RNA sequence: GGGAACGACUCGAGUAGAGUCGAAAAAACAAGACUUUUGUCAUCAACCAGGGUUCCAAAUUACAACCUUAUAGUGAUGGAUGAAGCACAUUUCACCGAUCCUUCUAGUGUCGCGGCUAGAGGAUACAACACAUGAGCAUUUCGAUGCUCAUGUGUUAAAAGAAACAACAACAACAAC
Reactivity to 2A3 in 0.01 (KOAc 150mM, MgCl2 10mM, bicine 150mM(pH8.5), 24C), signal-to-noise 2, nucleotides 027 to 126: a000a000c060a060a020g080a080c020u090u070u120u240g060u070c010a010u000c000a020a040c020c020a010g030g010g000u060u000c070c070a130a080a030u210u150a090c050a040a090c020c000u060u090a070u130a150g080u030g060a020u040g050g080a050u070g020a030a000g010c030a020c020a150u020u040u060c140a160c110c020g010a030u020c000c000u130u300c000u010a010g020u030g060u100c080g040c030g110g000c020u000a000g010a000g000g000a000u060a040c050
Reactivity to DMS in 0.01 (KOAc 150mM, MgCl2 10mM, bicine 150mM(pH8.5), 24C), signal-to-noise 2, nucleotides 027 to 126: a020a020c120a140a130g030a230c030u020u010u000u000g010u010c020a020u000c040a070a030c110c140a030g000g010g000u000u000c110c120a080a040a030u000u000a170c230a060a010c020c000u000u000a090u020a060g020u000g000a010u000g010g020a110u020g000a040a020g020c040a050c160a110u010u000u000c030a170c040c040g000a020u000c000c000u000u000c000u000a000g000u000g030u000c290g010c230g000g000c000u000a000g010a010g000g010a030u000a060c180
An RNA of 177 nucleotides, treated with 2A3 and DMS and read out base by base. The DMS profile rests on 1,394 reads. The reactions ran in a buffer of 150 mM KOAc, 10 mM MgCl2 and 150 mM bicine (pH 8.5), at 24 C.